[RMDB]
RNA sequence: GGGAACGACUCGAGUAGAGUCGAAAAUGAGACCAGCCCCAGGAGGGAAAGCCUACAUGGAUGUCAUAAGUCGACGAGACCAGAGAGGAUCCGGGCAGGUAGUGACUUAUGCUCUGAACACCAUCACCUUACUCUUACAUUUCGAUGUAAGAGUAAGAAAAGAAACAACAACAACAAC
Reactivity to 2A3 in 0.01 (KOAc 150mM, MgCl2 10mM, bicine 150mM(pH8.5), 24C), signal-to-noise 8, nucleotides 027 to 126: u140g020a040g040a040c010c020a020g050c000c010c000c020a030g030g040a060g030g030g000a050a060a020g070c010c010u070a080c050a080u170g030g010a040u070g100u110c010a020u020a100a020g030u050c030g090a050c030g020a040g040a080c010c010a010g060a000g010a030g150g070a050u020c030c020g010g020g000c020a010g050g050u070a040g030u030g050a000c000u030u040a010u060g010c000u010c020u050g050a050a020c020a020c050c010a050u070c030a070c010
Reactivity to DMS in 0.01 (KOAc 150mM, MgCl2 10mM, bicine 150mM(pH8.5), 24C), signal-to-noise 9, nucleotides 027 to 126: u010g010a120g010a120c030c040a120g020c060c020c020c060a120g020g010a100g020g000g010a080a070a130g010c030c020u000a070c140a090u010g010g010a060u000g000u010c020a030u000a030a050g010u000c020g010a050c050g000a240g010a060c020c030a050g000a070g000a150g010g000a110u000c030c040g010g000g010c080a060g010g010u010a070g010u010g010a030c020u000u000a030u000g000c040u000c030u000g000a060a070c130a080c050c030a090u010c100a100c190